Chemical mapping of a 177-nucleotide RNA with DMS. The RNA was probed in 150 mM KOAc, 10 mM MgCl2 and 150 mM bicine (pH 8.5) at 24 C.

RNA sequence: GGGAACGACUCGAGUAGAGUCGAAAAGACCCCUGGACGCUUUUCGUGGUUUUGCAAGCGCCGGAGAGCCUUCUGGCACACUCCCCGGUUGCCAACCCUGCCCAAGAGAGUCCCCAGGGCAGGAGAGGAACGCACGUAAAUUCGUUUACGUGCGUUCAAAAGAAACAACAACAACAAC
Reactivity to DMS in 0.01 (KOAc 150mM, MgCl2 10mM, bicine 150mM(pH8.5), 24C), signal-to-noise 1, nucleotides 027 to 126: g000a210c030c020c020c110u000g000g000a040c050g010c070u000u000u010u010c070g030u000g000g020u000u000u020u000g020c220a100a140g020c070g020c040c030g000g020a080g010a110g000c010c050u000u010c090u010g030g000c060a080c190a130c060u010c000c000c010c000g000g010u010u040g040c020c080a060a240c100c000c000u000g030c000c000c010a140a150g000a150g000a180g000u000c000c000c000c000a160g000g010g010c010a000g000g000a100g010a250g010
Background: DMS adducts were read by reverse transcription with MarathonRT.